[RMDB]
RNA sequence: GGGAACGACUCGAGUAGAGUCGAAAAGUCCAUUGGUGUCGCAGCCGCUACAGAUGUCCAAGUUGGCGCUGCAGGCAUUGGGAAGGGCACCGGCUGUUGUGCCAACUCAUCGCCAGCCUGGCAGGCCACGCGUUGAUUACUUCGGUAAUCAACGCGUAAAAGAAACAACAACAACAAC
Reactivity to DMS in 0.01 (KOAc 150mM, MgCl2 10mM, bicine 150mM(pH8.5), 24C), signal-to-noise 1, nucleotides 027 to 126: g000u020c020c000a100u010u000g020g030u000g010u000c060g030c070a040g020c080c020g050c120u000a070c140a080g020a060u000g000u000c060c210a090a110g000u000u020g040g010c000g000c020u000g010c020a030g000g020c040a050u010u010g000g000g000a100a120g010g010g040c010a080c020c040g010g020c120u010g010u010u000g010u000g010c000c000a040a200c060u000c050a060u000c090g000c100c050a090g000c010c020u000g000g000c050a040g000g030c030c100
Reactivity to 2A3 in 0.01 (KOAc 150mM, MgCl2 10mM, bicine 150mM(pH8.5), 24C), signal-to-noise 1, nucleotides 027 to 126: g000u000c010c010a080u070u150g000g030u050g070u040c020g000c030a010g030c040c000g020c050u080a050c030a080g090a140u100g120u040c010c050a070a000g080u060u050g050g000c120g000c080u000g010c000a020g010g050c050a050u060u080g040g000g040a160a140g080g020g030c040a030c030c000g070g070c130u110g030u170u050g010u010g040c030c000a010a140c040u040c030a070u050c050g120c060c000a010g010c020c000u010g190g000c000a000g000g010c040c000